[RMDB]
RNA sequence: GGGAACGACUCGAGUAGAGUCGAAAAGAUAUGGAGGUGCUGACUUUUGACGCUGACUCGGAAACGAGAAUCAGCGAUAAGUCAACACCUCCUAAGUCAAAUCCCUUACGGUUCGCCGUAAGGGAAAGUUAACUCAGCUGUUCGCAGCUGAGUUAACAAAAGAAACAACAACAACAAC
Reactivity to DMS in 0.01 (KOAc 150mM, MgCl2 10mM, bicine 150mM(pH8.5), 24C), signal-to-noise 2, nucleotides 027 to 126: g030a040u020a270u010g000g000a000g000g010u000g010c030u000g010a020c000u000u000u000u040g020a220c130g030c020u000g000a040c000u000c000g000g000a150a070a160c020g010a010g000a130a210u000c000a000g020c000g010a070u000a030a050g020u000c000a000a000c000a000c000c000u000c000c010u000a000a070g000u000c020a080a200a200u010c000c000c000u000u000a000c000g000g000u000u010c190g030c010c000g010u000a000a000g000g000g000a000a000a030
Reactivity to 2A3 in 0.01 (KOAc 150mM, MgCl2 10mM, bicine 150mM(pH8.5), 24C), signal-to-noise 1, nucleotides 027 to 126: g020a020u050a010u140g000g020a010g030g030u000g000c030u020g010a030c020u030u180u220u250g140a070c030g000c010u000g010a030c000u000c000g000g050a080a060a040c030g010a010g030a100a300u050c000a000g020c000g040a030u020a060a010g000u000c010a000a000c000a000c000c010u000c000c000u010a000a000g000u000c020a000a020a120u020c000c000c000u010u000a000c000g050g030u000u040c300g000c120c030g000u000a010a010g000g000g090a010a010a030
Structure probing data (DMS and 2A3) for a 177-nucleotide construct. 2A3 adducts were read by reverse transcription with SuperScript II with manganese. The 2A3 profile rests on 2,864 reads. Values cover nucleotides 27 to 126. The RNA was probed in 150 mM KOAc, 10 mM MgCl2 and 150 mM bicine (pH 8.5) at 24 C.